[RMDB]
RNA sequence: GGGAACGACUCGAGUAGAGUCGAAAAUCGGUCAAGCUGGCGGACUGAGCACUGCUCUCCGGGCUUGACCGGGGCCUCUCCCAGCUACGCCCCGAGCGUGUGCCCUGCCGACACGCGGGAACAAGACCCUAAGAUCCGAAUUCGUUCGGAUCUUAGGAAAAGAAACAACAACAACAAC
Reactivity to 2A3 in 0.01 (KOAc 150mM, MgCl2 10mM, bicine 150mM(pH8.5), 24C), signal-to-noise 9, nucleotides 027 to 126: u080c010g000g000u000c000a010a000g000c000u110g180g150c050g020g020a060c120u260g010a010g000c090a150c300u300g010c010u010c000u000c000c000g020g010g000c000u000u000g000a000c000c010g000g000g000g000c010c010u060c020u010c000c000c000a010g030c030u050a060c060g060c010c000c010c000g020a050g010c010g010u020g010u050g050c020c000c020u060g060c020c030g030a010c010a010c030g030c000g000g030g010a030a040c060a080a030g150a130c020
Reactivity to DMS in 0.01 (KOAc 150mM, MgCl2 10mM, bicine 150mM(pH8.5), 24C), signal-to-noise 3, nucleotides 027 to 126: u030c010g000g020u000c000a000a010g010c000u010g000g040c010g010g010a060c210u010g010a000g000c000a160c240u010g010c000u000c000u000c000c010g010g010g000c010u000u000g000a000c020c030g000g000g000g000c010c070u000c130u020c020c010c000a120g010c070u000a070c110g010c040c020c010c070g040a090g010c010g000u000g000u010g000c100c020c010u020g000c020c030g000a060c040a010c050g000c060g000g000g000a060a060c160a090a090g000a200c150